[RMDB]
RNA sequence: GGGAACGACUCGAGUAGAGUCGAAAACGCAACGAUUCCGCUUCCGACGCACAUAUGUCCAUGGCACGCAGGAAGCGAAUCCGGGACUCUCAACCCCCAUCGGGAGACCCGGAGCCCUGAGCGAACAAAAACUUCGCCUUUUCGAAGGCGAAGUUUUAAAAGAAACAACAACAACAAC
Reactivity to 2A3 in 0.01 (KOAc 150mM, MgCl2 10mM, bicine 150mM(pH8.5), 24C), signal-to-noise 1, nucleotides 027 to 126: c020g050c070a000a050c040g110a060u300u000c160c050g070c000u000u000c020c050g130a070c000g110c000a130c000a070u280a020u220g160u110c090c070a040u000g000g000c000a000c070g030c000a040g050g000a000a000g050c000g010a000a000u000c000c000g000g000g050a060c000u000c000u120c000a140a300c000c010c010c010c010a010u200c130g010g000g000a000g160a100c000c000c000g000g000a100g090c000c000c000u060g020a010g000c000g010a070a070c010a000